Structure probing data (DMS and 2A3) for a 177-nucleotide construct. The data come from the RNA Mapping Database (RMDB), library OK2TRN. The DMS profile rests on 5,768 reads. For DMS the reverse transcriptase was MarathonRT.

RNA sequence: GGGAACGACUCGAGUAGAGUCGAAAAGCAACAUCAUAUGGCACCCACUAAAGAUGAGUUUGACUGCAAAGCCUGGGCUUAUUUCUCUGAUGUUGACCUGGUAAGCAGGUGUCUAUUGUGCUGACCAUCACAGAACGUUAUUCGUAACGUUCUGUGAAAAAGAAACAACAACAACAAC
Reactivity to DMS in 0.01 (KOAc 150mM, MgCl2 10mM, bicine 150mM(pH8.5), 24C), signal-to-noise 5, nucleotides 027 to 126: g000c020a030a050c030a010u010c070a070u000a080u010g010g000c050a050c030c040c040a120c100u010a080a120a080g010a050u010g010a070g010u000u010u000g020a100c040u000g020c150a080a110a070g000c040c020u000g010g000g010c030u000u000a040u000u000u000c070u000c100u010g000a030u000g010u000u000g000a140c040c040u000g010g020u000a030a140g010c030a060g010g020u000g000u000c040u000a090u000u010g000u000g010c040u010g000a130c050c060a110
Reactivity to 2A3 in 0.01 (KOAc 150mM, MgCl2 10mM, bicine 150mM(pH8.5), 24C), signal-to-noise 2, nucleotides 027 to 126: g030c010a000a030c010a050u130c000a020u070a060u130g040g000c010a040c010c040c020a030c040u140a120a130a070g130a100u130g020a020g070u070u130u120g080a070c020u020g010c030a060a060a030g020c000c030u080g000g000g030c010u050u070a040u060u190u020c160u000c060u130g040a040u040g050u100u010g060a060c010c010u010g020g010u020a070a010g030c020a010g020g050u020g010u000c060u070a080u060u100g040u020g040c010u010g000a020c010c010a000